[RMDB]
RNA sequence: GGGAACGACUCGAGUAGAGUCGAAAAGAUAUGGAUCUAGGGAGAGGUUUUGGAAGAUCGAUAAGAUGACUUCGGAAACGAAGUUCAUCUUUUGACGAUCCCAAAACCUCUCCCUAGAUCCUAAGUCCUGAAUUAUUAGGUUCGCCUAAUAAUUCAGAAAAGAAACAACAACAACAAC
Reactivity to DMS in 0.01 (KOAc 150mM, MgCl2 10mM, bicine 150mM(pH8.5), 24C), signal-to-noise 3, nucleotides 027 to 126: g000a130u000a280u010g000g020a020u000c010u000a000g010g010g000a020g030a020g020g010u000u000u000u000g000g010a170a120g000a010u000c010g020a200u010a010a000g010a010u000g010a040c010u000u000c010g000g000a160a110a250c010g010a020a010g000u010u000c000a000u010c000u000u000u010u000g020a210c090g000a030u000c000c000c000a000a000a000a010c000c000u000c000u000c000c000c000u000a000g000a000u000c000c000u000a000a090g000u010c060

Chemical mapping of a 177-nucleotide RNA with DMS. Source: RMDB library TTRINS, as collected in RNAgym. The DMS profile rests on 4,885 reads.